Conditions: 150 mM KOAc, 10 mM MgCl2 and 150 mM bicine (pH 8.5), 24 C. An RNA of 177 nucleotides, treated with 2A3 and DMS and read out base by base. The 2A3 profile rests on 1,499 reads. For DMS the reverse transcriptase was MarathonRT. Source: RMDB library OK2TRN, as collected in RNAgym. 2A3 adducts were read by reverse transcription with SuperScript II with manganese.
RNA sequence: GGGAACGACUCGAGUAGAGUCGAAAAGGUGGUCCUCUCAGCCUUCUGGGUAGCUGGGACCAUAGGCGUGUGCCACCAUGCCCAGCUAAUUUUUUCGUAUUUUUAGUAGAGAUGGGGUUUUGCCAUGAAAUCAGUGUACGUUCGCGUACACUGAUUUAAAAGAAACAACAACAACAAC
Reactivity to 2A3 in 0.01 (KOAc 150mM, MgCl2 10mM, bicine 150mM(pH8.5), 24C), signal-to-noise 2, nucleotides 027 to 126: g080g010u030g000g040u060c020c020u030c020u040c010a030g000c010c000u070u010c040u060g050g010g040u030a010g000c010u030g000g000g040a000c030c040a030u070a040g030g020c060g020u200g110u240g090c000c000a070c030c000a030u050g020c000c000c020a020g000c010u000a030a120u080u090u040u030u010u110c030g040u130a150u050u130u020u020u090a020g030u030a020g040a030g000a140u060g020g000g000g030u000u050u090u180g030c020c020a050u120g100
Reactivity to DMS in 0.01 (KOAc 150mM, MgCl2 10mM, bicine 150mM(pH8.5), 24C), signal-to-noise 3, nucleotides 027 to 126: g010g020u000g000g010u010c040c040u020c140u020c050a180g000c020c000u000u000c090u010g000g010g010u000a050g000c020u000g000g010g020a050c050c050a030u010a030g010g020c030g010u010g010u020g000c010c010a080c050c030a060u010g000c000c010c010a060g010c020u000a020a000u010u000u000u010u020u010c130g000u010a030u000u010u010u000u000a050g000u010a110g010a040g010a060u010g000g000g010g010u000u000u000u000g010c030c060a080u000g000